[RMDB]
RNA sequence: GGGAACGACUCGAGUAGAGUCGAAAAAAGGUACUCUUGGUGCGGUUAGCGCUUUCGGCUUCGACGCGGGCGGCUUCCAGUUGCCGUUCAACUGUUUUGCGUUGGCUGAUAUCCAGCCAGCCACCGACCAUGUUGGGAACUUCGGUUCCCAACAUGGAAAAGAAACAACAACAACAAC
Reactivity to DMS in 0.01 (KOAc 150mM, MgCl2 10mM, bicine 150mM(pH8.5), 24C), signal-to-noise 1, nucleotides 027 to 126: a100a040g020g000u000a070c080u000c060u000u000g000g020u000g010c050g020g000u010u000a070g030c050g000c060u000u020u000c050g000g030c050u010u010c070g030a050c050g000c090g020g000g000c000g010g020c040u000u010c080c070a100g010u000u000g020c070c070g020u000u000c040a080a050c150u000g030u000u000u000u000g020c070g020u000u000g010g010c010u010g020a110u010a100u010c170c030a050g010c080c010a030g000c020c040a060c090c040g010a250
Reactivity to 2A3 in 0.01 (KOAc 150mM, MgCl2 10mM, bicine 150mM(pH8.5), 24C), signal-to-noise 1, nucleotides 027 to 126: a000a000g150g000u080a080c010u020c020u110u060g090g000u060g050c010g000g140u060u090a010g040c030g040c010u060u040u050c060g000g030c000u060u070c080g040a030c020g040c000g010g000g000c000g000g030c010u120u060c050c000a050g030u100u100g030c050c020g070u000u090c090a100a100c060u060g060u090u060u170u190g110c110g010u010u010g010g000c000u020g040a060u020a130u280c060c000a000g000c020c010a010g060c000c000a000c050c020g070a060